[RMDB]
RNA sequence: GGGAACGACUCGAGUAGAGUCGAAAAUAAUGGAUCAUCAGUCUUUCGAUCUAUAAUUCUAGCUAACUCAUUAAUGCUGGGGUUCCAUCUUAACAGAAAGAUGAGGGGAAAUGACUUGUAUGCGUACGUAUCCAAUACUGUUCGCAGUAUUGGAUACAAAAGAAACAACAACAACAAC
Reactivity to DMS in 0.01 (KOAc 150mM, MgCl2 10mM, bicine 150mM(pH8.5), 24C), signal-to-noise 6, nucleotides 027 to 126: u040a090a080u020g010g020a050u020c020a070u020c090a060g010u010c020u000u000u010c040g000a070u020c030u010a080u030a030a050u000u030c020u000a020g010c050u000a070a100c180u020c170a090u050u020a070a110u050g020c010u010g000g000g010g010u010u000c220c030a040u000c040u000u020a080a140c240a090g010a030a020a040g000a010u000g000a090g030g000g000g010a030a050a050u020g010a050c050u010u020g010u010a020u020g010c140g010u030a090c170
Reactivity to 2A3 in 0.01 (KOAc 150mM, MgCl2 10mM, bicine 150mM(pH8.5), 24C), signal-to-noise 9, nucleotides 027 to 126: u300a010a090u150g110g030a080u060c010a000u010c010a010g060u010c010u040u060u030c030g140a180u010c070u080a100u110a110a030u040u010c010u010a010g010c010u030a060a090c050u060c190a160u160u190a180a040u170g000c010u010g010g000g000g000u050u040c030c000a010u020c010u070u080a180a140c080a150g130a170a060a010g010a000u040g030a090g020g030g010g020a000a020a060u140g020a020c020u070u060g070u160a040u050g050c060g050u050a050c080
Source information
Source: RMDB library OK1LIB, as collected in RNAgym. The record gives the reactivity of an RNA of 177 nucleotides to DMS and 2A3. The RNA was probed in 150 mM KOAc, 10 mM MgCl2 and 150 mM bicine (pH 8.5) at 24 C. The 2A3 profile rests on 11,603 reads.